Conditions: 150 mM KOAc, 10 mM MgCl2 and 150 mM bicine (pH 8.5), 24 C. This 177-nucleotide RNA was probed chemically with 2A3 and DMS. For DMS the reverse transcriptase was MarathonRT. For 2A3 the reverse transcriptase was SuperScript II with manganese. Source: RMDB library OK2TST, as collected in RNAgym.
[RMDB]
RNA sequence: GGGAACGACUCGAGUAGAGUCGAAAAGCUGAAUUUGACCGCGUUGAUCUGGAUUCGGUGCGCUGUCUGGCUGUUAGCGGGAAUCGCAAUCUACGUCGGAUACAGAUAUCAGCACUCGGUGCAAGGAUCGUAUCACCGGAUUCGUCCGGUGAUACGAAAAAGAAACAACAACAACAAC
Reactivity to 2A3 in 0.01 (KOAc 150mM, MgCl2 10mM, bicine 150mM(pH8.5), 24C), signal-to-noise 1, nucleotides 027 to 126: g000c020u000g050a000a030u000u020u000g030a040c000c010g010c000g030u000u040g010a010u010c120u060g020g010a010u030u010c020g060g160u230g030c050g020c030u050g050u300c040u060g190g120c060u080g030u240u120a010g010c000g070g020g030a010a000u030c030g000c220a000a030u050c010u060a020c030g170u200c070g080g030a020u070a000c000a000g020a010u030a140u100c000a000g000c000a020c040u020c030g000g110u150g010c050a100a070g140g020a120
Reactivity to DMS in 0.01 (KOAc 150mM, MgCl2 10mM, bicine 150mM(pH8.5), 24C), signal-to-noise 2, nucleotides 027 to 126: g010c020u010g000a010a030u000u000u000g000a110c020c010g010c080g000u000u000g000a030u010c130u010g010g000a020u000u000c000g020g030u000g010c040g090c020u000g010u000c090u000g010g020c120u000g000u010u000a080g010c020g000g000g000a040a020u000c020g000c040a060a040u000c030u000a010c040g010u010c040g000g010a140u000a090c020a000g030a030u000a110u000c010a010g030c020a230c030u000c020g020g030u010g030c090a110a120g010g010a180